The data come from the RNA Mapping Database (RMDB), library M2PK50. This 177-nucleotide RNA was probed chemically with 2A3 and DMS. The 2A3 profile rests on 13,916 reads. The DMS profile rests on 5,788 reads. Conditions: 150 mM KOAc, 10 mM MgCl2 and 150 mM bicine (pH 8.5), 24 C. DMS adducts were read by reverse transcription with MarathonRT.
[RMDB]
RNA sequence: GGGAACGACUCGAGUAGAGUCGAAAAUACGUACCGUUCGCGGUACGUAACUUACCGAGAACCUUGGUCGGUAUAACAAGGAAACCCUUGGAAACAAGGGAACAAGAUUACCCUUCGGGGUAAUCAAGUAUUUCAACUAGUUCGCUAGUUGAAAUACAAAAGAAACAACAACAACAAC
Reactivity to 2A3 in 0.01 (KOAc 150mM, MgCl2 10mM, bicine 150mM(pH8.5), 24C), signal-to-noise 5, nucleotides 027 to 126: u030a000c000g000u000a000c010c000g010u020u060c270g000c010g070g010u010a000c010g000u000a000a000c000u020u060a030c000c010g020a030g030a100a100c010c010u050u040g090g030u060c040g020g030u160a110u080a120a030c040a030a020g050g030a090a070a070c010c000c000u000u000g020g010a030a040a020c000a000a000g000g010g010a000a010c010a010a030g000a000u000u000a010c020c000c000u020u080c240g030g000g000g000u000a000a000u000c010a000a010
Reactivity to DMS in 0.01 (KOAc 150mM, MgCl2 10mM, bicine 150mM(pH8.5), 24C), signal-to-noise 5, nucleotides 027 to 126: u000a000c000g010u000a000c010c000g020u010u010c200g030c010g010g010u000a000c010g020u000a010a050c120u010u010a180c010c010g000a060g000a110a140c030c030u000u000g010g010u010c010g010g000u000a040u010a070a080c100a070a050g010g010a150a130a130c010c000c000u000u010g010g000a130a120a170c000a010a000g000g010g010a050a040c160a110a090g010a010u000u000a000c000c000c000u000u010c170g030g000g000g010u000a000a010u000c000a050a090